[RMDB]
RNA sequence: GGGAACGACUCGAGUAGAGUCGAAAAUACUAGCAUUCGGUUCCAACCCUGGAUGGAUACUCAAAGGUUGGCUGAGUUCCUUCCUCCGGCCUUGGUUCCGAUGCUCCAUCGAAGGCCGGAAACCAAAUAUAGGCAAUCUUUUCGAAGAUUGCCUAUAAAAAGAAACAACAACAACAAC
Reactivity to DMS in 0.01 (KOAc 150mM, MgCl2 10mM, bicine 150mM(pH8.5), 24C), signal-to-noise 2, nucleotides 027 to 126: u000a120c080u000a060g020c030a010u020u000c000g010g000u010u000c050c040a030a110c100c060c060u010g000g000a030u000g000g010a050u000a030c020u000c010a050a070a070g020g000u000u010g010g030c160u000g000a040g010u000u000c010c000u000u000c040c040u000c000c040g030g000c020c010u000u010g000g000u000u000c050c020g020a030u000g000c060u000c070c050a070u000c120g000a080a060g020g000c000c000g010g000a040a050a090c180c100a040a040a120